[RMDB]
RNA sequence: GGGAACGACUCGAGUAGAGUCGAAAAGAUAUGGACAUGAAGAGACAUGCCUAUCGGAAACGAUGAGGCAACAGCUCUGUGUCCUAAGUCAAAGAGGAUUGCAAGGGUUCGCCCUUGCAAUCCUCAACUCUAUUUAGCUGUUCGCAGCUAAAUAGAGAAAAGAAACAACAACAACAAC
Reactivity to 2A3 in 0.01 (KOAc 150mM, MgCl2 10mM, bicine 150mM(pH8.5), 24C), signal-to-noise 1, nucleotides 027 to 126: g030a000u050a020u130g020g000a000c000a000u160g220a220a160g010a010g030a040c010a060u040g000c000c000u020a000u000c010g010g000a040a060a020c020g010a020u120g300a040g050g000c020a030a030c070a090g000c000u010c020u020g000u020g000u000c010c000u000a070a050g080u020c020a060a080a130g010a000g000g000a000u000u000g000c000a000a000g140g000g020u120u130c230g180c020c000c000u000u010g040c000a030a000u000c000c000u010c000a010a000
Reactivity to DMS in 0.01 (KOAc 150mM, MgCl2 10mM, bicine 150mM(pH8.5), 24C), signal-to-noise 5, nucleotides 027 to 126: g010a030u010a300u020g000g010a010c000a020u000g010a110a030g010a020g010a060c090a230u000g000c000c000u000a060u000c000g010g000a120a070a160c000g010a010u000g010a030g010g000c000a010a050c220a120g000c000u000c000u000g000u000g000u000c000c000u000a020a070g010u000c040a080a110a130g010a010g010g000a010u000u000g000c000a020a000g000g010g020u000u020c300g010c000c000c000u000u000g000c000a000a000u000c000c000u000c000a000a050
Chemical mapping of a 177-nucleotide RNA with 2A3 and DMS. For DMS the reverse transcriptase was MarathonRT. For 2A3 the reverse transcriptase was SuperScript II with manganese. It was measured as part of the RMDB library TTRDEL. The 2A3 profile rests on 2,917 reads.